RNA sequence: GGGAACGACUCGAGUAGAGUCGAAAAGAGCUUUGCCAGGCGGGCUCGGUACCGUGGGCCGCACGUGCCCGCCCUUCACAGACAGGAGAAGCCGUUGCGGCGGCCCGGUCACGCUGCGUAUCGCGGAACGGUAUUUUAUCUUCGGAUAAAAUACCGUAAAAGAAACAACAACAACAAC
Reactivity to DMS in 0.01 (KOAc 150mM, MgCl2 10mM, bicine 150mM(pH8.5), 24C), signal-to-noise 3, nucleotides 027 to 126: g000a120g020c010u000u000u010g020c060c090a120g020g000c020g020g000g020c020u000c020g010g020u000a100c040c020g010u010g010g000g030c020c000g020c070a100c030g010u000g010c010c010c010g000c060c010c050u000u010c090a090c210a140g010a110c250a060g010g000a100g020a090a090g010c020c060g020u000u010g020c030g010g020c020g020g020c040c050c020g000g000u010c080a090c090g020c040u010g000c060g020u010a060u010c060g000c050g020g000a120
Reactivity to 2A3 in 0.01 (KOAc 150mM, MgCl2 10mM, bicine 150mM(pH8.5), 24C), signal-to-noise 2, nucleotides 027 to 126: g040a000g000c040u120u150u170g130c090c080a000g030g000c000g000g020g000c020u020c050g030g050u070a040c020c000g040u100g000g040g010c020c020g050c000a060c040g010u040g000c000c000c000g050c000c000c010u110u060c040a120c040a110g190a140c030a030g000g030a110g010a050a010g020c030c030g070u090u160g060c080g010g020c000g000g000c000c020c010g010g010u080c030a010c040g000c030u020g020c030g070u100a040u250c040g000c090g010g000a040